The record gives the reactivity of an RNA of 177 nucleotides to 2A3 and DMS.
For DMS, 59,484 sequencing reads were counted.
The RNA was probed in 150 mM KOAc, 10 mM MgCl2 and 150 mM bicine (pH 8.5) at 24 C.
DMS adducts were read by reverse transcription with MarathonRT.
RNA sequence: GGGAACGACUCGAGUAGAGUCGAAAACAGUGCCAUCUGGGUGCUCAUUGGCUAGGUGAUUACAACAGGUAGCUUGGCCUCGGUGGACUUCGGGAUCUUACCUGUAAACCCUUCUGUCCCUGGGAUGACCUACAUAAUAGUUCGCUAUUAUGUAGGUAAAAGAAACAACAACAACAAC
Reactivity to 2A3 in 0.01 (KOAc 150mM, MgCl2 10mM, bicine 150mM(pH8.5), 24C), signal-to-noise 9, nucleotides 027 to 126: c030a020g080u060g170c020c000a050u030c090u140g070g000g050u120g030c040u060c100a090u110u180g050g000c010u010a040g060g100u050g080a130u160u240a080c060a160a020c010a090g150g080u030a010g010c000u030u050g030g000c010c000u010c020g040g030u060g040g040a030c020u090u060c060g020g000g030a060u040c040u060u110a080c010c000u020g010u060a070a080a120c010c000c000u040u060c050u070g060u040c000c000c010u040g020g040g020a040u150g100
Reactivity to DMS in 0.01 (KOAc 150mM, MgCl2 10mM, bicine 150mM(pH8.5), 24C), signal-to-noise 9, nucleotides 027 to 126: c100a060g010u000g010c030c030a050u000c040u010g010g010g020u000g010c040u000c100a070u010u010g010g020c040u000a040g010g020u000g000a120u010u010a100c200a120a110c080a040g000g010u000a080g010c080u000u000g010g000c020c010u000c060g010g020u000g010g000a050c080u000u000c100g010g000g000a080u010c070u000u000a070c040c030u000g010u000a050a070a110c030c010c020u000u000c090u010g000u000c010c010c010u000g000g010g010a150u010g000